[RMDB]
RNA sequence: GGGAACGACUCGAGUAGAGUCGAAAAGUCGCCGCGUCGACAUCAACGCCCAGCGCGGGCGAGGGAUGCGUCCUACGGGGGUGACCCAUUCGCCGGCAUGGAAGAGGACGGCAAGAUUGCCGCGACGCGCUGAGCAUACGUUCGCGUAUGCUCAGCGAAAAGAAACAACAACAACAAC
Reactivity to 2A3 in 0.01 (KOAc 150mM, MgCl2 10mM, bicine 150mM(pH8.5), 24C), signal-to-noise 2, nucleotides 027 to 126: g050u010c000g020c060c010g040c020g010u050c020g010a090c010a050u080c040a000a140c010g010c000c000c010a030g060c300g000c070g140g000g000c000g010a030g050g050g020a030u050g170c050g090u090c010c000u070a130c180g130g010g000g000g020u030g010a060c030c000c020a180u070u020c000g000c000c000g080g000c030a000u040g000g060a110a070g080a050g110g060a020c000g000g000c000a030a030g150a300u160u240g000c000c020g010c020g000a010c000g000
Reactivity to DMS in 0.01 (KOAc 150mM, MgCl2 10mM, bicine 150mM(pH8.5), 24C), signal-to-noise 2, nucleotides 027 to 126: g050u000c050g030c060c100g030c000g010u000c020g000a240c100a070u000c020a100a070c040g040c140c000c000a140g020c130g010c060g000g030g000c000g000a070g000g000g000a060u000g010c020g020u000c000c010u000a060c170g040g010g000g010g010u010g020a170c040c000c030a170u010u000c020g030c010c000g020g000c020a020u000g000g000a050a110g000a130g000g020a120c020g000g030c070a070a120g020a060u010u000g000c010c090g000c060g010a060c030g000
Annotation
This 177-nucleotide RNA was probed chemically with 2A3 and DMS. The reactions ran in a buffer of 150 mM KOAc, 10 mM MgCl2 and 150 mM bicine (pH 8.5), at 24 C. For DMS, 1,313 sequencing reads were counted.